Structure probing data (DMS and 2A3) for a 177-nucleotide construct. The data come from the RNA Mapping Database (RMDB), libraries RFM100 and RFMREP. DMS (dimethyl sulfate) methylates the pairing face of unpaired adenines and cytosines.

RNA sequence: GGGAACGACUCGAGUAGAGUCGAAAAGGGAGCAGACUGUAAAUCUGCCGUCAUCGACUUCGAAGGUUCGAUUCGAGCGCAGCGAGAAAGCGUUGCCGUAGGCAACGACCCGAAGGGCGAAGCGCGCGGUCUUAAUUUGCUUCGGCAAAUUAAGACCAAAAGAAACAACAACAACAAC
Reactivity to DMS in 0.01 (KOAc 150mM, MgCl2 10mM, bicine 150mM(pH8.5), 24C), signal-to-noise 2, nucleotides 027 to 126: g000g030g000a300g010c000a000g000a010c040u020g000u060a110a070a220u000c000u000g000c020c010g000u020c080a070u020c010g010a030c000u000u040c050g020a210a040g020g020u020u000c000g000a120u050u040c020g000a130g020c000g010c010a030g000c020g000a130g000a100a150a140g000c000g000u000u010g000c000c000g000u020a090g020g030c000a000a000c000g000a020c060c000c040g020a120a090g020g000g010c050g010a170a160g000c000g000c040g000c110
Reactivity to 2A3 in 0.01 (KOAc 150mM, MgCl2 10mM, bicine 150mM(pH8.5), 24C), signal-to-noise 4, nucleotides 027 to 126: g090g040g010a180g010c050a000g000a050c040u210g210u300a040a020a090u000c000u010g010c000c000g100u050c000a080u010c000g030a020c000u120u020c060g010a050a060g090g000u010u040c020g030a250u020u030c030g020a010g000c040g000c000a100g000c020g020a050g050a100a090a000g040c000g020u010u000g000c000c050g250u140a130g000g000c000a000a020c010g080a090c020c000c010g060a060a080g080g000g010c020g010a080a010g020c000g000c000g000c030

Reactivities are rounded to 0.1 and cut off at 0 and 3. For 2A3, 1,964 sequencing reads were counted.